[RMDB]
RNA sequence: GGGAACGACUCGAGUAGAGUCGAAAAGAUGAUAUUAGAACUUCUAAUUGAUGUCGAUGGUAUGUAUCUAGGAGUAUCUAUUUUAACAAAGCAUCGAUUUGCUAAUAUACAAUUAUCCUUUUGAUUACCCUUGCAGACCGUUCGCGGUCUGCAAGGGAAAAGAAACAACAACAACAAC
Reactivity to 2A3 in 0.01 (KOAc 150mM, MgCl2 10mM, bicine 150mM(pH8.5), 24C), signal-to-noise 1, nucleotides 027 to 126: g080a000u000g000a010u000a000u000u040a000g000a010a000c130u120u000c020u040a190a040u000u190g000a000u040g150u120c060g010a000u260g010g000u130a060u190g000u020a040u000c010u000a170g030g100a110g110u000a000u000c030u020a040u040u180u000u190a170a040c050a050a160a000g120c000a000u000c000g000a000u000u090u240g000c000u000a000a000u020a000u000a000c020a050a070u080u000a000u130c000c000u000u000u150u140g000a150u000u080a140

Structure probing data (2A3) for a 177-nucleotide construct. Conditions: 150 mM KOAc, 10 mM MgCl2 and 150 mM bicine (pH 8.5), 24 C. Values are in units of 0.01, from 0 to 300, in steps of 10. For 2A3 the reverse transcriptase was SuperScript II with manganese. For 2A3, 355 sequencing reads were counted. It was measured as part of the RMDB library OK1LIB.